[RMDB]
RNA sequence: GGGAACGACUCGAGUAGAGUCGAAAAUGUGAAUCCAGCUGGUUCAAGGCUGCAGGCCCACUUCCCUUGGCAGAUUUUUCCAUUUCAGGGAGUGGGGAAAGUGGCCCUAAACCAUCAAAAUGGAUUACCCAUCUAGGAAGUUCGCUUCCUAGAUGGGAAAAGAAACAACAACAACAAC
Reactivity to 2A3 in 0.01 (KOAc 150mM, MgCl2 10mM, bicine 150mM(pH8.5), 24C), signal-to-noise 1, nucleotides 027 to 126: u160g010u010g070a010a000u000c020c000a000g070c020u000g000g020u030u000c000a000a020g000g000c000u010g000c000a040g120g180c010c000c010a000c030u150u070c020c000c000u000u020g060g020c070a090g050a260u150u030u000u210u010c030c050a060u090u040u170c000a010g010g010g000a000g000u020g060g000g000g010a020a030a030g020u020g000g010c000c010c000u030a030a010a000c030c000a000u050c050a000a130a020a120u070g000g000a000u040u030a060
Reactivity to DMS in 0.01 (KOAc 150mM, MgCl2 10mM, bicine 150mM(pH8.5), 24C), signal-to-noise 1, nucleotides 027 to 126: u000g010u010g000a040a000u000c000c010a140g010c130u010g020g010u000u000c120a100a060g000g030c000u020g000c020a080g010g050c020c000c000a090c000u010u010c010c000c070u000u000g010g000c300a110g000a170u000u000u000u020u020c010c040a090u000u000u010c280a120g000g000g000a020g040u000g030g010g010g000a020a050a170g010u010g000g030c000c000c010u000a070a080a040c000c040a040u000c050a090a040a060a140u000g000g010a000u000u000a200
Structure probing data (2A3 and DMS) for a 177-nucleotide construct. The reactions ran in a buffer of 150 mM KOAc, 10 mM MgCl2 and 150 mM bicine (pH 8.5), at 24 C. Source: RMDB library RFMREP, as collected in RNAgym. DMS adducts were read by reverse transcription with MarathonRT.